[RMDB]
RNA sequence: GGGAACGACUCGAGUAGAGUCGAAAAGCAACUUAGGAUUUUAGGCUCCCCGUGCGUGUCUCGAACCAUGCCGGGCCAAACCCACGGGGGCUGGCGGUCCCCGUGGGGUCAAAAUCAAACCGCUGGAAAAACAGUUCUAGCUUCGGCUAGAACUGAAGAUGAUAUUCCUCUUCGGAGGAAUAUCAUCAAAAGAAACAACAACAACAAC
Reactivity to 2A3 in 0.01 (KOAc 150mM, MgCl2 10mM, bicine 150mM(pH8.5), 24C), signal-to-noise 2, nucleotides 027 to 156: g070c020a000a150c120u130u210a160g160g000a100u120u090u020u110a070g030g010c030u110c010c020c000c040g070u100g030c030g020u090g000u050c100u060c250g070a020a030c050c000a000u010g000c000c000g000g020g000c030c010a070a060a020c010c000c000a000c010g000g000g000g000g000c000u010g010g010c000g000g000u010c020c000c000c000g000u000g000g010g000g000u010c000a000a000a010a120u080c020a060a110a110c020c000g020c040u050g040g040a110a150a020a010a000c000a000g010u000u010c000u000a010g000c000u060u070c190g070g000c000u000a000g000a000a000c000u000g000a000a020